[RMDB]
The record gives the reactivity of an RNA of 177 nucleotides to 2A3 and DMS. Conditions: 150 mM KOAc, 10 mM MgCl2 and 150 mM bicine (pH 8.5), 24 C. 2A3 adducts were read by reverse transcription with SuperScript II with manganese. As a SHAPE reagent, 2A3 marks flexible, mostly unpaired nucleotides at the ribose 2'-OH.
RNA sequence: GGGAACGACUCGAGUAGAGUCGAAAACAAACAAACCAACCACACUCAGAGCCCAAAUAAACCGAAGUAACCUCAUCUCAUCGGUGGAGAUGAAAAGGACGCAUUCGUCCAAAGGGCUCUGACAAAACAACACGUAUGUCUUCGGACAUACGUGUUGAAAAGAAACAACAACAACAAC
Reactivity to 2A3 in 0.01 (KOAc 150mM, MgCl2 10mM, bicine 150mM(pH8.5), 24C), signal-to-noise 5, nucleotides 027 to 126: c050a000a080a000c030a020a100a030c020c010a010a040c020c020a060c000a020c070u000c000a000g000a000g010c000c000c000a010a070a020u130a040a060a010c020c030g010a020a000g020u050a030a050c010c020u000c000a000u000c000u000c000a100u140c060g220g030u140g090g000a010g000a000u000g020a040a040a000a060g010g000a040c040g020c120a300u120u110c010g010u010c010c010a010a010a050g000g000g000c000u000c000u000g000a000c010a000a060a000a010
Reactivity to DMS in 0.01 (KOAc 150mM, MgCl2 10mM, bicine 150mM(pH8.5), 24C), signal-to-noise 2, nucleotides 027 to 126: c100a060a100a130c070a040a130a110c100c190a030a090c120c070a080c150a160c250u000c000a000g000a000g000c000c000c020a110a020a070u030a060a120a070c110c120g000a010a060g010u040a100a120c070c050u000c020a020u000c020u000c020a080u000c070g000g000u060g000g000a000g000a020u000g010a030a010a000a110g000g000a010c070g070c160a180u030u000c080g030u000c000c050a010a080a040g000g000g000c000u000c050u000g010a000c120a040a020a050a150